[RMDB]
RNA sequence: GGGAACGACUCGAGUAGAGUCGAAAAGUUUUUAGACAUUCCACAUCUGAUGUCCUUUUUGAUGCUUAAGUAAAACUGGAAAAACUGAAAAGACUUCUUUCAUGUGUCCUCAAACAUACUUAUGACCGGGUAUUCACUUGACUCAGCCCAUUGAGUACUAUAUGACGUCAUUCGUGACGUCAUAUAGAAAAGAAACAACAACAACAAC
Reactivity to DMS in 0.01 (KOAc 150mM, MgCl2 10mM, bicine 150mM(pH8.5), 24C), signal-to-noise 2, nucleotides 027 to 156: g010u000u010u010u010u000a170g010a070c020a110u000u000c040c110a120c040a050u000c070u000g000a100u000g000u020c020c020u000u000u000u000u000g000a100u000g030c050u000u000a080a110g000u000a030a050a070a200c070u000g010g010a050a010a040a070a090c040u010g010a090a060a100a090g010a140c090u010u010c030u000u000u010c050a040u000g040u000g020u000c030c030u010c060a050a050a130c050a140u010a050c070u000u000a040u000g000a090c020c010g030g020g020u000a080u000u010c110a050c080u000u000g020a050c010u000c010a090g000c050c040c080a170u000u000g000a080g020u000a130
Reactivity to 2A3 in 0.01 (KOAc 150mM, MgCl2 10mM, bicine 150mM(pH8.5), 24C), signal-to-noise 5, nucleotides 027 to 156: g020u030u040u030u110u200a080g020a050c040a040u100u070c030c020a050c030a120u100c080u080g020a050u030g060u070c020c030u070u090u050u050u120g090a080u090g020c040u090u070a050a000g030u030a030a090a090a100c060u050g010g030a030a050a030a040a070c060u060g040a040a050a060a080g120a110c030u070u050c000u040u120u040c080a050u130g030u000g030u060c010c010u030c050a040a130a060c020a030u160a080c030u140u100a070u200g060a090c000c050g050g000g000u030a050u030u120c030a020c070u050u060g030a010c010u010c020a020g030c010c020c000a030u050u070g030a020g010u040a030